An RNA of 207 nucleotides, treated with DMS and 2A3 and read out base by base. For DMS the reverse transcriptase was MarathonRT. The data come from the RNA Mapping Database (RMDB), library M2RFOK. For DMS, 4,956 sequencing reads were counted. Values cover nucleotides 27 to 156.
[RMDB]
RNA sequence: GGGAACGACUCGAGUAGAGUCGAAAAGCCAGUCAGAGGGCGCUACCAUGCAAACUAAGGCUGGCUACUCUUGCACAGAAUCACCUUUCUAUAAUAACCAGUGCAAGAAGGGUUAUUAUACCAUUUAAAAAUCGUGAAUGCUUCGGCAUUCACGAAACGUAGUUAGUAACUUCGGUUACUAACUACGAAAAGAAACAACAACAACAAC
Reactivity to DMS in 0.01 (KOAc 150mM, MgCl2 10mM, bicine 150mM(pH8.5), 24C), signal-to-noise 3, nucleotides 027 to 156: g040c000c010a020g020u000c010a100g010a130g010g020g020c300g000c030u000a070c120c070a120u000g040c020a100a290a220c100u000a100a140g030g010c020u000g020g020c010u000a030c020u010c010u010u000g000c010a050c000a100g030a140a140u010c060a090c050c030u000u000u000c060u000a060u000a020a020u000a040a000c000c000a300g010u000g000c020a020a020g010a020a080g010g010g020u000u000a030u000u000a020u000a070c180c040a220u030u000u050a010a090a110a110a150u000c000g050u010g010a030a010u000g010c000u000u010c300g080g040c010a000u000u000c000a010c020g010a010a010a080
Reactivity to 2A3 in 0.01 (KOAc 150mM, MgCl2 10mM, bicine 150mM(pH8.5), 24C), signal-to-noise 9, nucleotides 027 to 156: g000c010c000a000g010u010c000a010g000a030g200g010g010c020g000c010u140a300c090c110a140u300g000c010a020a040a030c000u030a070a030g000g000c000u000g000g000c000u000a000c000u000c000u000u000g000c000a000c000a010g070a100a100u090c040a220c070c000u120u300u190c120u120a010u000a010a010u000a000a010c000c000a000g000u000g000c010a000a000g000a010a010g010g000g000u000u000a000u020u000a000u010a030c010c020a130u150u250u300a060a160a040a030a060u040c010g000u000g000a000a000u000g000c010u050u050c160g050g000c000a000u000u000c000a000c000g000a000a000a000